Record summary
An RNA of 207 nucleotides, treated with 2A3 and DMS and read out base by base. The 2A3 profile rests on 2,375 reads. For DMS the reverse transcriptase was MarathonRT. Source: RMDB library OK3TST, as collected in RNAgym. For DMS, 8,390 sequencing reads were counted. The reactions ran in a buffer of 150 mM KOAc, 10 mM MgCl2 and 150 mM bicine (pH 8.5), at 24 C.
RNA sequence: GGGAACGACUCGAGUAGAGUCGAAAAGAAAACACAACCUUCAGCAAGUGUUUCUUAACUGACAAGAAGAACAGAGUCGUGGAACCCAGGCUCAGUAACAACGAAUGUUCGUGCACAUUUCGUGAAAUUUGUCUGCAUGAAGGAGUCACAUUUGAGAACGGGAAAAUAAUUUCGAUUAUUUUCCCGUAAAAGAAACAACAACAACAAC
Reactivity to 2A3 in 0.01 (KOAc 150mM, MgCl2 10mM, bicine 150mM(pH8.5), 24C), signal-to-noise 5, nucleotides 027 to 156: g010a000a030a010a000c010a000c010a030a160c020c040u160u170c070a040g000c040a120a210g010u020g020u040u000u020c010u030u070a160a100c050u090g000a010c030a080a050g140a110a010g020a080a030c040a050g000a000g000u000c020g020u030g010g150a050a050c010c000c010a010g000g000c000u010c010a050g040u120a110a050c080a030a040c080g100a080a050u070g020u110u090c090g040u080g040c030a000c000a020u120u180u120c130g040u120g110a030a070a080u040u050u040g040u000c060u030g000c040a060u050g020a020a030g070g010a030g010u030c030a020c050a160u100u120u180g080a050g010a050
Reactivity to DMS in 0.01 (KOAc 150mM, MgCl2 10mM, bicine 150mM(pH8.5), 24C), signal-to-noise 4, nucleotides 027 to 156: g010a110a060a050a080c040a030c020a100a140c050c050u000u000c090a090g030c040a110a250g010u000g010u000u000u000c000u000u000a060a230c070u000g030a050c030a090a120g010a130a150g000a120a090c040a120g000a060g020u010c020g000u000g020g020a080a120c030c020c030a140g010g030c020u000c000a110g000u000a080a090c040a120a070c030g010a030a090u000g000u000u010c120g050u000g030c080a100c020a030u000u000u000c030g020u010g000a120a070a100u010u000u000g010u010c060u000g000c010a070u000g020a040a050g020g010a180g010u000c010a090c050a110u010u000u000g020a140g020a130